[RMDB]
RNA sequence: GGGAACGACUCGAGUAGAGUCGAAAAAGGAGCAGAAUAUAACGGCUAUGCAUGCACCUGUACAAAUGACGAGAAAGAGUUGGUGUUACACUAUCAUGGUCGAAACAACAAUGAUAAAGAGCUCAAAACUAGUAACGUGGUUCGCCACGUUACUAGUAAAAGAAACAACAACAACAAC
Reactivity to DMS in 0.01 (KOAc 150mM, MgCl2 10mM, bicine 150mM(pH8.5), 24C), signal-to-noise 3, nucleotides 027 to 126: a070g020g010a060g000c010a060g000a150a080u000a060u000a210a090c070g010g010c070u000a010u010g020c150a140u020g000c040a050c060c030u000g000u010a070c110a050a100a120u010g020a050c080g020a090g010a100a110a090g010a170g010u000u000g010g010u020g020u010u020a060c100a070c120u000a040u030c020a010u000g010g050u030c070g020a050a090a050c190a060a020c120a070a010u040g000a030u030a020a090a180g000a060g020c060u020c020a020a040a100
Reactivity to 2A3 in 0.01 (KOAc 150mM, MgCl2 10mM, bicine 150mM(pH8.5), 24C), signal-to-noise 2, nucleotides 027 to 126: a000g120g000a040g070c010a030g100a220a040u110a000u010a120a030c010g030g020c000u010a000u010g050c030a000u090g030c000a020c000c030u010g040u080a010c020a010a200a140u210g100a000c070g030a000g110a190a040a010g120a020g070u090u060g050g000u000g040u090u100a020c070a040c090u130a030u190c010a010u010g060g000u000c000g040a100a010a000c000a030a000c010a010a080u030g020a010u110a160a070a020g070a020g000c010u070c060a010a150a000

Conditions: 150 mM KOAc, 10 mM MgCl2 and 150 mM bicine (pH 8.5), 24 C.
This 177-nucleotide RNA was probed chemically with DMS and 2A3.
The 2A3 profile rests on 1,230 reads.
It was measured as part of the RMDB library OK2TST.
For 2A3 the reverse transcriptase was SuperScript II with manganese.